[RMDB]
RNA sequence: GGGAACGACUCGAGUAGAGUCGAAAAGAAGGAGAUGAAAGCGACUUUAGAAUCGGCUAACUGAGCAGUCAGAUACAGACGGCAAGUAUCGUCGCCAGAGAUACAGUCGCAAAUAGCCGGAGGAGAACCAUAUAUCGCAGUUCGCUGCGAUAUAUGGAAAAGAAACAACAACAACAAC
Reactivity to 2A3 in 0.01 (KOAc 150mM, MgCl2 10mM, bicine 150mM(pH8.5), 24C), signal-to-noise 8, nucleotides 027 to 126: g090a040a020g050g050a090g020a050u130g080a090a010a030g010c010g010a000c010u090u100u070a070g050a120a110u040c010g030g000c020u030a060a040c020u030g020a020g030c030a020g040u020c010a010g050a070u110a180c040a040g070a020c000g030g010c030a070a030g020u030a070u130c070g040u030c020g050c020c020a040g010a000g000a060u040a050c040a010g000u000c000g000c000a000a080a030u060a020g020c010c010g020g010a030g050g050a060g020a020a010
Reactivity to DMS in 0.01 (KOAc 150mM, MgCl2 10mM, bicine 150mM(pH8.5), 24C), signal-to-noise 6, nucleotides 027 to 126: g020a160a080g010g000a050g010a080u020g000a080a110a140g000c010g000a040c030u010u000u020a080g010a130a110u010c020g000g000c010u000a080a080c010u000g000a090g020c090a060g030u000c010a030g030a100u020a080c210a080g000a070c050g000g000c050a110a100g010u010a060u020c070g000u020c080g020c050c050a050g010a060g000a110u000a030c080a080g000u010c010g000c020a020a080a060u010a050g010c020c010g010g000a070g010g010a130g010a080a180